[RMDB]
Source information
Conditions: 150 mM KOAc, 10 mM MgCl2 and 150 mM bicine (pH 8.5), 24 C. Chemical mapping of a 207-nucleotide RNA with 2A3 and DMS. For 2A3, 2,980 sequencing reads were counted. 2A3 adducts were read by reverse transcription with SuperScript II with manganese. As a SHAPE reagent, 2A3 marks flexible, mostly unpaired nucleotides at the ribose 2'-OH.
RNA sequence: GGGAACGACUCGAGUAGAGUCGAAAAGCCUGGCGCAUGGAGGCGCGUGGUGACUUGUUCCUACCCGUGGGAUGUGAACGUUUGCCUGCGAUGGCUUUGGGGAAUGCGACCACUACGCUAUAAGGUGGGGGUAAGUCGGGCGAUCCUGGCGGGUCACGUUGAGUAAUCGGUUCGCCGAUUACUCGACAAAAGAAACAACAACAACAAC
Reactivity to 2A3 in 0.01 (KOAc 150mM, MgCl2 10mM, bicine 150mM(pH8.5), 24C), signal-to-noise 3, nucleotides 027 to 156: g020c000c010u040g160g000c010g000c030a080u110g080g060a040g080g050c010g000c020g050u030g010g020u060g020a100c070u040u090g000u000u010c010c000u020a020c000c000c000g010u040g010g000g000a030u050g090u090g130a040a020c030g020u040u100u080g020c000c000u030g010c020g070a070u100g050g000c000u080u060u100g020g000g010g030a050a060u140g020c000g040a030c010c020a020c030u110a050c080g040c070u150a100u050a300a040g070g010u040g020g030g010g000g020u050a010a040g080u110c010g000g020g000c010g000a000u000c000c000u010g080g030c010g000g000g000u040c020a010c100
Reactivity to DMS in 0.01 (KOAc 150mM, MgCl2 10mM, bicine 150mM(pH8.5), 24C), signal-to-noise 1, nucleotides 027 to 156: g010c010c000u000g010g000c030g040c040a120u040g020g010a140g010g020c030g000c020g050u000g000g060u010g040a090c080u050u020g000u010u010c000c000u010a030c000c000c000g040u000g000g010g020a100u010g020u000g000a120a110c050g010u000u020u000g000c000c010u010g010c080g010a140u010g000g000c020u010u000u010g020g000g010g070a110a080u010g010c010g000a190c140c020a020c020u000a090c030g030c040u000a100u010a090a130g020g000u000g000g010g030g060g000u030a060a080g030u010c010g020g000g000c010g020a040u020c000c020u020g020g050c060g010g000g000u000c060a080c130